[RMDB]
RNA sequence: GGGAACGACUCGAGUAGAGUCGAAAAAACGCCGGUGGCGAAAGCGACACGCUGGGGCCUGUCUGACGCUGAGGCACGAAAGCCAGGGUAGCGAACGGGAUUAGAUACCCCGGUAGUCUUGGCUGUAGAUUGAUGGGCUAUUCGUAGCCCAUCAAUCAAAAGAAACAACAACAACAAC
Reactivity to DMS in 0.01 (KOAc 150mM, MgCl2 10mM, bicine 150mM(pH8.5), 24C), signal-to-noise 2, nucleotides 027 to 126: a020a060c090g000c060c000g010g050u000g000g010c020g010a140a090a180g000c070g000a110c150a120c060g050c020u000g040g020g010g010c030c020u000g000u000c030u010g010a150c040g040c020u030g000a100g040g000c040a050c130g010a110a120a080g000c010c010a000g000g000g000u000a050g000c030g000a130a180c010g000g010g000a130u000u010a050g000a170u070a100c150c000c000c020g020g000u020a040g020u000c000u000u000g000g010c000u000g040u030a060
The record gives the reactivity of an RNA of 177 nucleotides to DMS. Source: RMDB library RFM100, as collected in RNAgym. The reactions ran in a buffer of 150 mM KOAc, 10 mM MgCl2 and 150 mM bicine (pH 8.5), at 24 C.